[RMDB]
RNA sequence: GGGAACGACUCGAGUAGAGUCGAAAAUUCAGUUAACCAAAUUGUCUUGCGUAAUUCUAAUGGUGCUUGCAUUUGGAACGCUGCUGCAUAUAUGAAACUCUCGGAUGCACUUAAACGACAGAUUCGCCAACGCUCGCCUUCGGGCGAGCGAAAAGAAACAACAACAACAAC
Reactivity to DMS in 0.01 (KOAc 150mM, MgCl2 10mM, bicine 150mM(pH8.5), 24C), signal-to-noise 1, nucleotides 027 to 129: u050u030c080a090g000u040u060a030a210c000c000a030a030a090u070u020g000u020c000u110u000g060c070g030u030a170a040u050u030c120u070a060a120u000g060g030u280g050c030u060u050g050c000a030u070u120u050g000g040a050a080c100g010c090u020g000c170u010g000c030a040u010a140u000a050u030g070a050a040a130c060u060c050u020c080g000g000a060u040g000c040a030c000u090u020a200a080a150c070g000a040c250a040g000a100u050u000c000g000c100c000a060a100
Reactivity to 2A3 in 0.01 (KOAc 150mM, MgCl2 10mM, bicine 150mM(pH8.5), 24C), signal-to-noise 3, nucleotides 027 to 129: u080u050c000a000g020u000u000a090a030c000c000a060a000a000u120u050g090u060c000u000u020g000c070g040u140a130a140u200u130c090u200a110a130u140g160g030u100g030c000u010u020g010c000a000u000u020u000g030g000a040a080c040g010c000u000g000c010u030g020c120a030u040a000u000a000u160g110a090a000a000c050u060c000u000c050g000g030a010u080g000c060a010c090u110u100a150a000a000c000g040a030c010a050g040a080u070u030c040g000c020c020a090a020

Annotation
This 170-nucleotide RNA was probed chemically with DMS and 2A3. Values cover nucleotides 27 to 129. The DMS profile rests on 2,556 reads. The RNA was probed in 150 mM KOAc, 10 mM MgCl2 and 150 mM bicine (pH 8.5) at 24 C. It was measured as part of the RMDB library 15KLIB. DMS adducts were read by reverse transcription with MarathonRT. For 2A3 the reverse transcriptase was SuperScript II with manganese.